[RMDB]
RNA sequence: GGGAACGACUCGAGUAGAGUCGAAAAACAUACGGCCAAGCGGGAACGCCGGGAGUACAAGGCGUACAUGGAUAUGGGGUGCCAGGAUAUGCUUGGCCUGGCAUGAAUGACGCGACUGCCCAAAUGGGGCCACUAGGAUAUUCGUAUCCUAGUGGCCAAAAGAAACAACAACAACAAC
Reactivity to 2A3 in 0.01 (KOAc 150mM, MgCl2 10mM, bicine 150mM(pH8.5), 24C), signal-to-noise 3, nucleotides 027 to 126: a010c050a040u160a050c010g030g000c000c000a030a030g020c000g000g060g020a110a000c040g030c010c010g070g060g030a120g080u090a080c080a130a100g050g020c020g000u000a060c010a080u100g080g010a050u060a100u170g040g040g010g000u020g060c000c000a000g040g010a010u040a030u250g020c030u040u020g050g010c000c000u010g000g000c010a020u050g050a100a030u060g020a010c020g020c050g020a030c000u070g030c000c000c000a020a040a060u200g090g000
Reactivity to DMS in 0.01 (KOAc 150mM, MgCl2 10mM, bicine 150mM(pH8.5), 24C), signal-to-noise 1, nucleotides 027 to 126: a150c060a070u120a150c040g000g000c000c030a070a050g030c020g030g010g000a060a050c040g040c020c030g010g030g020a110g000u000a100c140a110a130g020g000c000g000u000a060c090a080u000g000g000a060u000a020u020g000g000g020g030u010g000c000c010a030g000g030a030u100a030u010g010c070u010u010g020g000c000c000u000g000g000c000a030u000g000a090a050u030g000a120c000g000c030g000a090c020u000g030c010c000c010a070a010a090u040g000g000
The record gives the reactivity of an RNA of 177 nucleotides to 2A3 and DMS. The DMS profile rests on 2,221 reads. Reactivities are rounded to 0.1 and cut off at 0 and 3.